[RMDB]
RNA sequence: GGGAACGACUCGAGUAGAGUCGAAAAAGACGUGUACGCACGUCACACCGUGGCGGCGGUGUAAAACAAACCUUAAGCCGCCAGCGUCCCGGAACAAGGCAUUUUCCGAUUCUCCGGGGGUUGCAAAAAAACUGAACUUGGUUCGCCAAGUUCAGAAGAUUGACAUAAACUUCGGUUUAUGUCAAUCAAAAGAAACAACAACAACAAC
Reactivity to 2A3 in 0.01 (KOAc 150mM, MgCl2 10mM, bicine 150mM(pH8.5), 24C), signal-to-noise 3, nucleotides 027 to 156: a010g010a000c020g000u010g030u050a040c220g020c080a000c000g000u000c000a000c000a000c000c000g040u050g010g000c010g000g010c010g000g000u020g020u050a050a080a010a020c060a040a050a030c020c000u100u150a090a010g040c010c010g000c000c010a010g020c000g050u060c000c000c000g010g000a040a040c060a090a050g020g050c100a100u040u070u210u140c050c020g050a070u110u020c010u000c050c000g000g000g000g000g020u220u140g000c030a020a070a020a030a010a010a040c010u000g000a000a000c000u000u010g000g010u030u020c050g020c040c000a000a000g000u000u010c000a000g000a000a010
Reactivity to DMS in 0.01 (KOAc 150mM, MgCl2 10mM, bicine 150mM(pH8.5), 24C), signal-to-noise 2, nucleotides 027 to 156: a080g010a010c000g050u020g030u000a120c200g080c010a000c000g000u000c020a220c010a050c000c000g030u010g030g040c020g030g050c030g030g010u010g020u010a010a080a060a140c150a130a080a130c060c060u000u020a110a240g040c000c020g000c000c010a060g030c080g000u000c020c000c020g010g020a090a130c080a110a150g000g030c170a130u000u000u020u000c040c000g000a230u010u000c080u010c010c010g020g000g030g000g000u000u000g000c010a030a000a110a090a070a080a180c000u010g030a010a020c010u000u000g010g010u000u010c300g040c000c000a010a020g000u000u000c000a020g000a020a060